[RMDB]
The record gives the reactivity of an RNA of 177 nucleotides to DMS and 2A3.
RNA sequence: GGGAACGACUCGAGUAGAGUCGAAAACGUGGCGCACCAUUCAGGAGAUGCGGAAGCCGGUCGACUAUUCUCCGAUCGUGUCGUCACUCUCGGCGGCACAUGUCGCGGUACCGGCGACGUACGACGACGCGUGUUAUGUUUUCGAACAUAACACGCGAAAAGAAACAACAACAACAAC
Reactivity to DMS in 0.01 (KOAc 150mM, MgCl2 10mM, bicine 150mM(pH8.5), 24C), signal-to-noise 4, nucleotides 027 to 126: c110g010u010g000g020c030g010c050a050c030c050a110u020u000c160a090g020g010a070g000a040u000g000c030g020g010a120a220g010c020c000g020g000u000c040g020a090c140u000a110u010u000c060u010c060c010g000a050u010c290g010u000g010u000c000g020u000c010a120c120u000c120u010c040g010g000c010g000g000c020a010c020a040u000g010u000c030g020c110g020g010u010a050c040c020g030g000c000g000a070c050g010u000a020c030g000a100c090g000a160
Reactivity to 2A3 in 0.01 (KOAc 150mM, MgCl2 10mM, bicine 150mM(pH8.5), 24C), signal-to-noise 3, nucleotides 027 to 126: c040g000u050g020g020c030g010c020a030c030c010a040u090u110c020a050g040g060a110g050a080u050g030c010g020g010a060a020g000c010c000g000g010u060c060g050a050c030u100a140u270u050c090u030c060c000g010a040u090c060g030u000g020u040c010g000u000c010a060c050u060c040u030c060g010g000c020g020g000c030a020c020a060u150g040u010c020g000c060g060g020u070a030c020c000g010g010c000g000a000c000g020u080a020c050g010a020c040g010a030
For 2A3, 5,211 sequencing reads were counted. DMS adducts were read by reverse transcription with MarathonRT. Source: RMDB library OK2TRN, as collected in RNAgym.